Chemical mapping of a 207-nucleotide RNA with DMS and 2A3. For 2A3, 5,286 sequencing reads were counted.

RNA sequence: GGGAACGACUCGAGUAGAGUCGAAAACCGUGACAUUGCGAAAGCAAGGCUGGCGGUAGGGAGUCCUGGGCGGCGACAGCCUUGGACUGCGGCGUAAAGGUGUACCUGGGGCCGUUAAACCUAUCGUGAAAGGCAACUUGGUUCGCCAAGUUGCCAAGUUCAAAUAUCACUUCGGUGAUAUUUGAACAAAAGAAACAACAACAACAAC
Reactivity to DMS in 0.01 (KOAc 150mM, MgCl2 10mM, bicine 150mM(pH8.5), 24C), signal-to-noise 3, nucleotides 027 to 156: c010c010g000u010g020a060c070a090u000u000g020c030g030a170a120a280g020c030a030a050g010g050c030u000g030g010c010g000g010u000a040g010g020g000a060g010u010c010c010u000g010g010g030c010g020g010c070g000a130c140a230g010c000c010u000u010g010g000a020c010u000g020c040g010g020c020g030u010a110a240a030g000g020u010g030u010a060c010c010u000g010g030g000g010c010c010g000u000u010a060a130a180c020c010u000a030u000c020g000u000g010a080a100a100g000g010c000a020a010c030u010u000g010g010u000u010c300g000c010c000a010a040g020u000u000g030c010c000a000a020
Reactivity to 2A3 in 0.01 (KOAc 150mM, MgCl2 10mM, bicine 150mM(pH8.5), 24C), signal-to-noise 3, nucleotides 027 to 156: c020c000g040u070g040a090c160a200u020u050g000c020g050a130a030a030g020c010a010a020g090g020c080u110g050g000c010g010g000u000a000g010g020g000a010g000u000c000c000u020g000g000g010c010g050g040c120g110a060c130a030g000c000c000u010u020g000g010a000c000u000g000c000g000g000c010g030u070a060a050a020g050g020u190g080u280a240c010c010u030g000g000g130g000c000c000g000u010u060a030a020a000c000c000u010a010u010c000g000u020g030a110a070a000g000g000c000a000a000c000u000u000g010g000u030u030c040g000c080c000a000a000g000u010u000g000c000c000a000a000